[RMDB]
RNA sequence: GGGAACGACUCGAGUAGAGUCGAAAAAAGCGUAACCUCUUGUAAAUCUCCAACACUAAGCUUGGUUACAGCUCUGUUGAAGAAUUGCAGGUGGUAGGUGAAACUAUGUCACGUUCGCGUGACAUAGGAUCUAAUCGUGGUUCGCCACGAUUAGAUCAAAAGAAACAACAACAACAAC
Reactivity to 2A3 in 0.01 (KOAc 150mM, MgCl2 10mM, bicine 150mM(pH8.5), 24C), signal-to-noise 3, nucleotides 027 to 126: a000a000g040c020g000u020a050a080c000c020u010c000u000u010g020u010a030a050a070u020c010u000c000c010a020a010c020a020c060u140a060a010g010c010u120u100g090g200u300u190a120c050a050g000c010u020c000u020g000u010u020g010a010a000g010a010a040u040u020g000c020a000g020g000u020g000g020u060a060g110g030u090g050a040a020a030c000u000a000u000g010u000c000a010c000g010u040u030c240g010c000g070u000g000a000c000a000u000a000g010
Reactivity to DMS in 0.01 (KOAc 150mM, MgCl2 10mM, bicine 150mM(pH8.5), 24C), signal-to-noise 3, nucleotides 027 to 126: a070a120g010c060g010u000a120a040c000c010u000c010u000u000g010u000a000a030a050u000c000u000c010c000a000a010c010a030c210u000a110a040g000c010u000u000g050g000u000u010a110c170a010g020c000u000c150u000g010u010u010g000a020a010g000a020a050u000u000g020c000a010g010g010u000g000g010u010a050g010g010u000g000a090a030a300c000u000a020u000g000u000c010a000c000g000u010u000c170g050c000g020u000g010a000c000a010u000a000g000